[RMDB]
RNA sequence: GGGAACGACUCGAGUAGAGUCGAAAAGGGGUCACAAGCUUUUGACGACGACUGGUGGAGCAUCGAUCGUACUGAAGCCUCCACGGUACGGGAGCUCCACUGGUCGUCGAUAAGCUUGUGACGGAGGCACCCAAACUGGCGGAUUCGUCCGCCAGAAUCUUCCAGAAGUGUUCGCACUUCUGGAAGAAAAAGAAACAACAACAACAAC
Reactivity to 2A3 in 0.01 (KOAc 150mM, MgCl2 10mM, bicine 150mM(pH8.5), 24C), signal-to-noise 1, nucleotides 027 to 156: g000g000g020g000u000c000a000c000a010a010g010c000u190u180u190u280g300a230c150g010a000c000g000a000c000u020g000g000u000g000g000a000g020c000a050u300c010g020a010u010c000g010u000a000c000u030g090a110a030g000c010c000u000c000c000a000c010g010g000u010a000c010g000g000g000a030g000c000u000c000c020a000c000u000g000g000u000c000g000u010c000g000a000u020a000a020g020c000u000u000g010u010g000a000c030g040g000a000g000g010c000a070c010c020c020a030a100a100c000u020g000g000c000g020g020a020u060u060c210g080u030c050c010g000c010c010a000g050a040a040